[RMDB]
The record gives the reactivity of an RNA of 207 nucleotides to 2A3 and DMS. Conditions: 150 mM KOAc, 10 mM MgCl2 and 150 mM bicine (pH 8.5), 24 C. DMS adducts were read by reverse transcription with MarathonRT. For DMS, 2,324 sequencing reads were counted.
RNA sequence: GGGAACGACUCGAGUAGAGUCGAAAACUGCUGUCAAGAUUGAGCGUGCACCUCACCAAUCUGCCAAGCUCUACGGACGACAGUGAGUGAGCGGCGUCUGGUCGCAAAACGGGUAGUUAAUGGCAAUUGUAGCUUUGACGACAAAGACGAGGUCGUAGUGUGUUACAUCAUUCGUGAUGUAACACACAAAAGAAACAACAACAACAAC
Reactivity to 2A3 in 0.01 (KOAc 150mM, MgCl2 10mM, bicine 150mM(pH8.5), 24C), signal-to-noise 4, nucleotides 027 to 156: c010u040g000c030u040g020u030c020a080a050g030a300u040u080g010a060g020c030g040u140g020c020a100c040c020u110c040a080c030c020a070a050u070c080u070g000c010c030a070a060g020c020u010c030u070a020c030g110g060a020c050g020a020c030a060g030u030g080a030g010u070g060a060g030c040g030g000c010g060u140c150u150g070g000u020c030g000c010a020a060a010a060c060g030g000g020u040a060g020u040u110a080a060u100g040g000c040a080a080u070u070g040u060a040g030c020u070u040u110g050a070c050g000a010c020a000a080a010g080a040c090g030a030g020g020u000c020g000u020a100
Reactivity to DMS in 0.01 (KOAc 150mM, MgCl2 10mM, bicine 150mM(pH8.5), 24C), signal-to-noise 1, nucleotides 027 to 156: c000u000g000c010u000g020u000c030a160a140g020a070u000u000g000a080g010c000g060u000g000c030a040c110c040u000c030a110c070c070a050a080u000c050u000g010c010c010a030a110g040c090u000c030u000a140c080g030g010a210c010g000a030c010a070g030u000g000a100g030u000g000a130g000c070g030g020c030g000u000c000u000g020g000u030c010g020c020a030a000a040a080c010g000g000g000u000a060g050u000u000a130a090u000g010g000c000a060a110u000u010g000u000a170g050c000u000u000u000g040a110c010g030a090c040a090a070a110g000a080c060g000a070g020g020u000c000g020u000a170